[RMDB]
RNA sequence: GGGAACGACUCGAGUAGAGUCGAAAAGGCGUAGCCGACAAAAUGCCCAGGUAGCCCAGACCUUCAAGGCUACGGUGCGUUGCGACGCACGGUCUGAUUCUUCACAACGACGUUCACCGCGUCUUCUACAACCGGCAAAGAUUCGUCUUUGCCGGAACAAGUAUAACUCGUUCGCGAGUUAUACUUGAAAAGAAACAACAACAACAAC
Reactivity to DMS in 0.01 (KOAc 150mM, MgCl2 10mM, bicine 150mM(pH8.5), 24C), signal-to-noise 3, nucleotides 027 to 156: g000g030c020g040u010a090g040c020c000g020a260c100a090a090a100a150u000g000c010c020c050a110g040g030u000a070g000c020c020c120a120g000a100c040c000u000u000c070a070a280g010g020c010u000a020c010g020g000u010g030c040g030u000u010g020c170g020a140c030g020c020a070c050g000g000u010c030u010g020a260u000u000c050u000u000c080a100c080a080a100c030g020a050c020g010u000u000c080a090c060c060g000c030g010u000c020u000u010c030u000a100c070a080a140c000c000g020g000c000a010a010a030g010a080u000u010c300g000u000c010u010u000u000g010c000c000g010g000a000a020
Reactivity to 2A3 in 0.01 (KOAc 150mM, MgCl2 10mM, bicine 150mM(pH8.5), 24C), signal-to-noise 8, nucleotides 027 to 156: g040g010c120g120u120a030g020c020c010g010a030c110a010a160a000a060u140g020c000c010c020a020g030g010u020a010g000c020c040c110a020g010a010c000c000u030u020c030a020a000g000g000c010u000a000c000g010g000u010g000c010g000u010u070g060c180g130a010c020g000c000a000c010g000g010u000c000u000g030a070u120u110c080u170u150c100a080c050a230a100c120g020a000c010g060u190u250c080a050c110c030g010c000g020u000c020u040u000c040u100a110c030a120a070c010c000g000g000c010a010a000a010g000a010u060u110c160g030u000c110u000u000u010g000c000c000g000g000a000a000

Chemical mapping of a 207-nucleotide RNA with DMS and 2A3. For DMS, 7,252 sequencing reads were counted. High 2A3 reactivity points to a flexible backbone, as in loops and unpaired stretches. Source: RMDB library M2RFPK, as collected in RNAgym.